RNA sequence: GGGAACGACUCGAGUAGAGUCGAAAAGAGCUCGAUGCACUUUUACGGGUGGAAGAAGGGACUCAAGACGGGUAUGUACUAUCUGCGGACCCGCGCCAAGGCCAAGGCGCAACAGGUGACUGUGCCCGUGGAGAGCGCCGAGGCGCUGGCAUGCCGCGGGACAUGUAGUUUUCGAACUACAUGUCCCAAAAGAAACAACAACAACAAC
Reactivity to 2A3 in 0.01 (KOAc 150mM, MgCl2 10mM, bicine 150mM(pH8.5), 24C), signal-to-noise 1, nucleotides 027 to 156: g050a050g020c040u070c200g160a090u090g000c050a090c120u040u030u010u200a010c010g030g000g030u140g000g020a050a090g050a020a070g040g000g000a010c010u010c150a040a010g020a020c020g030g000g010u060a060u140g120u020a070c070u120a190u080c080u090g000c000g020g050a070c000c050c040g080c030g000c010c010a000a030g000g000c030c010a010a060g010g000c080g000c040a010a010c030a010g000g060u120g020a070c020u020g040u080g020c000c000c020g020u030g000g090a210g000a000g040c120g000c000c010g000a010g000g000c000g000c010u050g050g020c000a040u110g050c020c000g020c070